The data come from the RNA Mapping Database (RMDB), library OK3TST. The record gives the reactivity of an RNA of 207 nucleotides to 2A3.

RNA sequence: GGGAACGACUCGAGUAGAGUCGAAAACGCAUGCGAGAGCAUGCGGCUAAGCUUCGGCUUAGUAAGAGCAACUUAGGAUUUAAGGCUCCCCGGCGUGUCUCGAACCAUGCCGGGCCAAACCCAUAGGGCUGGCGGUCCCUGUGCGGUCUAAAUUCAAAAUCGCUAGGUAUUUCGAUACCUAGCGAUUAAAAGAAACAACAACAACAAC
Reactivity to 2A3 in 0.01 (KOAc 150mM, MgCl2 10mM, bicine 150mM(pH8.5), 24C), signal-to-noise 1, nucleotides 027 to 156: c000g000c000a000u010g020c000g000a030g000a000g060c010a000u000g000c000g000g000c000u000a000a000g000c000u030u130c300g080g000c000u020u010a000g000u000a050a070g000a010g000c040a040a150c020u020u070a060g050g030a070u080u060u070a050a030g050g030c000u000c010c000c000c000g000g000c010g020u010g030u050c110u060c300g050a060a030c020c010a010u010g000c000c000g020g000g010c020c010a010a000a000c020c000c000a010u020a000g000g000g000c040u040g100g040c110g070g050u160c000c010c000u000g010u000g000c120g020g000u000c090u110a020a030a020u040u050c040a100a050
The reactions ran in a buffer of 150 mM KOAc, 10 mM MgCl2 and 150 mM bicine (pH 8.5), at 24 C.